Background:
Chemical mapping of a 177-nucleotide RNA with DMS. Conditions: 150 mM KOAc, 10 mM MgCl2 and 150 mM bicine (pH 8.5), 24 C. For DMS the reverse transcriptase was MarathonRT.
RNA sequence: GGGAACGACUCGAGUAGAGUCGAAAAGAUAUGGAUCCAGUAAAAGCAUGAUACCUUCGAUAAGUCCACACUCGGAAACGAGUGCCGGACUUUUGACGAAGGUCAUGCUUUUACUGGAUCCUAAGUCGUUUAUUACUAACUUCGGUUAGUAAUAAACAAAAGAAACAACAACAACAAC
Reactivity to DMS in 0.01 (KOAc 150mM, MgCl2 10mM, bicine 150mM(pH8.5), 24C), signal-to-noise 3, nucleotides 027 to 126: g010a110u020a300u010g010g000a000u000c000c000a010g010u000a010a000a020a000g010c000a010u000g000a150u010a060c010c000u000u000c010g000a200u010a030a020g010u000c010c000a300c010a000c010u000c000g000g010a110a110a210c000g000a020g010u000g010c170c180g030g010a000c000u000u000u010u010g010a200c130g010a020a000g020g000u000c000a000u000g000c000u010u010u000u000a000c010u000g000g010a000u000c000c000u000a020a080g010u010c140